[RMDB]
RNA sequence: GGGAACGACUCGAGUAGAGUCGAAAAGAUAUGGAACGGCAGACAGCAACAGCUCGGAAACGAGACAUGCUGUUCUGCGUUCCUAAGUCAAAAUCCGAUCGUUGUGGUUCGCCACAACGAUCGGAAAUCAUCAGAAACACUUCGGUGUUUCUGAUGAAAAAGAAACAACAACAACAAC
Reactivity to 2A3 in 0.01 (KOAc 150mM, MgCl2 10mM, bicine 150mM(pH8.5), 24C), signal-to-noise 1, nucleotides 027 to 126: g010a000u040a020u130g000g000a030a010c040g300g000c000a010g010a010c020a010g040c000a000a070c050a250g100c000u000c010g000g070a100a080a060c010g000a000g020a010c010a010u040g000c000u010g020u100u010c010u000g000c000g000u000u000c000c000u010a110a000g000u020c040a040a000a000a300u050c000c000g010a010u000c010g000u010u020g000u000g020g100u050u100c300g080c160c020a000c020a020a020c000g010a000u010c040g000g020a000a000a000
Reactivity to DMS in 0.01 (KOAc 150mM, MgCl2 10mM, bicine 150mM(pH8.5), 24C), signal-to-noise 2, nucleotides 027 to 126: g000a020u000a300u000g000g000a010a020c000g000g030c020a000g010a010c020a000g000c000a050a060c300a270g030c010u000c010g010g000a120a030a210c000g000a010g010a060c100a210u000g000c000u010g000u010u030c000u010g010c010g000u010u000c000c000u000a020a110g000u000c050a090a050a120a070u000c000c000g000a000u000c000g000u000u000g030u000g000g000u000u040c250g000c010c010a000c000a010a020c000g000a010u000c000g000g000a000a010a050
Chemical mapping of a 177-nucleotide RNA with 2A3 and DMS. The 2A3 profile rests on 2,231 reads.